[RMDB]
RNA sequence: GGGAACGACUCGAGUAGAGUCGAAAAUACGACUACGUGCGCCUGCUGUCCGCGCCCGCCGUCAGGCACGAUUACGAAACCAGCUACGAGGCGCCCGAUGCGCCGGACCGCAAGUACGGCGCUGGCAAUUUUAGGUACCAUUCGUGGUACCUAAAAUAAAAGAAACAACAACAACAAC
Reactivity to DMS in 0.01 (KOAc 150mM, MgCl2 10mM, bicine 150mM(pH8.5), 24C), signal-to-noise 9, nucleotides 027 to 126: u000a090c100g000a120c060u000a100c070g010u000g010c050g020c030c010u000g010c040u000g010u010c070c040g000c060g010c030c050c040g010c050c050g010u010c070a090g010g020c020a050c040g000a130u010u000a100c110g010a080a100a130c100c050a080g010c050u000a090c120g000a120g000g010c020g010c030c070c060g010a090u010g010c010g010c010c010g000g000a030c070c070g010c190a100a270g010u000a050c050g000g000c010g010c010u000g000g010c150a090
Reactivity to 2A3 in 0.01 (KOAc 150mM, MgCl2 10mM, bicine 150mM(pH8.5), 24C), signal-to-noise 3, nucleotides 027 to 126: u130a020c050g050a050c070u110a040c100g050u040g030c010g020c020c010u030g020c010u030g030u050c040c040g010c020g030c020c010c010g040c020c010g080u090c040a030g020g000c030a010c060g080a100u150u230a080c060g070a060a020a040c040c010a020g020c030u050a050c070g060a050g020g000c020g020c010c030c000g100a070u120g000c020g000c010c010g010g010a020c010c030g050c070a050a020g010u020a030c010g010g000c010g020c000u000g010g020c030a030